[RMDB]
RNA sequence: GGGAACGACUCGAGUAGAGUCGAAAAUUCGCAUGGGGCCUGCUCUAAGGUGGGCCAGCUAAAAGCGACAUUGCAAAUGUGGAAUGUGAGAGUGGUAGGGUUAAAACCUGACUCUGUAAAUUUAUCACCAUCUUUCAAACUUCGGUUUGAAAGAUGGAAAAGAAACAACAACAACAAC
Reactivity to DMS in 0.01 (KOAc 150mM, MgCl2 10mM, bicine 150mM(pH8.5), 24C), signal-to-noise 1, nucleotides 027 to 126: u010u020c030g040c030a040u010g000g050g010g040c060c020u000g000c010u020c300u010a150a160g010g020u000g000g020g030c040c000a020g080c040u000a000a030a130a120g000c030g000a060c070a060u000u000g020c110a060a080a110u010g000u000g000g000a010a020u010g000u000g010a070g000a030g020u000g000g060u020a040g020g000g060u010u030a080a050a120a160c000c010u000g000a030c020u000c000u010g000u000a030a060a080u040u000u000a140u010c160a150
Overview: This 177-nucleotide RNA was probed chemically with DMS. Source: RMDB library RFMREP, as collected in RNAgym. The RNA was probed in 150 mM KOAc, 10 mM MgCl2 and 150 mM bicine (pH 8.5) at 24 C.